[RMDB]
RNA sequence: GGGAACGACUCGAGUAGAGUCGAAAAGUGCGACAUUUCGAUGUCGCACAAACCCAAAUGGUGGCACCUAACUAAACAAGCCGGGAAAAGGCAGAUGCCAACGUCCUUAGCCCUUCGGGGCUAAGAAGUUCCUCUCUUCAUUCGUGAAGAGAGGAACAAAAGAAACAACAACAACAAC
Reactivity to DMS in 0.01 (KOAc 150mM, MgCl2 10mM, bicine 150mM(pH8.5), 24C), signal-to-noise 2, nucleotides 027 to 126: g010u000g000c000g010a050c000a020u010u000u000c180g020a000u000g000u000c000g010c010a000c000a010a070a090c010c010c010a080a170a070u010g000g000u000g010g000c000a010c020c030u010a160a090c150u010a080a030a210c130a060a100g000c010c020g030g020g000a040a080a120a170g010g000c000a030g000a040u000g000c000c000a030a030c080g010u000c090c000u000u000a010g020c020c000c000u000u010c150g000g020g020g020c000u010a010a000g000a080a070
Reactivity to 2A3 in 0.01 (KOAc 150mM, MgCl2 10mM, bicine 150mM(pH8.5), 24C), signal-to-noise 3, nucleotides 027 to 126: g010u000g030c000g020a000c000a000u040u050u110c180g150a020u020g000u020c010g030c000a000c000a010a000a000c000c000c000a050a050a030u140g030g010u010g000g000c030a190c150c000u080a140a110c040u130a150a050a070c080a120a010g010c020c070g020g040g020a140a210a050a020g030g000c020a010g020a090u090g020c010c000a010a020c030g030u050c010c000u000u010a000g000c000c000c000u020u040c260g060g010g000g000c010u000a010a010g000a000a010